Notes
An RNA of 207 nucleotides, treated with DMS and read out base by base. It was measured as part of the RMDB library RNAMAK.

RNA sequence: GGGAACGACUCGAGUAGAGUCGAAAACGCUGGGGCGAUGCCACCACGAUGCUCCCUGUGGCGAGCUUCUGAAGCGCGCACGGAAGCGAUGAGCCACCUGGAGCUAAGUGGUGGCAUCGCCCUGUGCUGAAGCGCGCACGGCAACCGAAAGGUGCGACAAUCAAUCUACGUUCGCGUAGAUUGAUUGAAAAGAAACAACAACAACAAC
Reactivity to DMS in 0.01 (KOAc 150mM, MgCl2 10mM, bicine 150mM(pH8.5), 24C), signal-to-noise 1, nucleotides 027 to 156: c080g080c020u000g010g020g030g000c020g000a030u000g040c020c000a030c010c000a040c010g060a210u010g010c000u000c020c000c020u000g040u010g020g010c040g030a090g060c000u000u000c010u000g010a000a060g020c000g050c070g030c000a300c060g000g040a030a040g010c020g010a160u000g010a300g000c020c030a040c000c040u010g050g010a050g050c020u000a020a150g020u000g010g020u000g010g000c000a000u000c000g070c000c000c000u000g000u000g010c000u010g030a110a080g010c000g040c010g070c020a300c030g000g020c030a080a160c020c020g040a100a110a130g040g000u000g010c000g000a250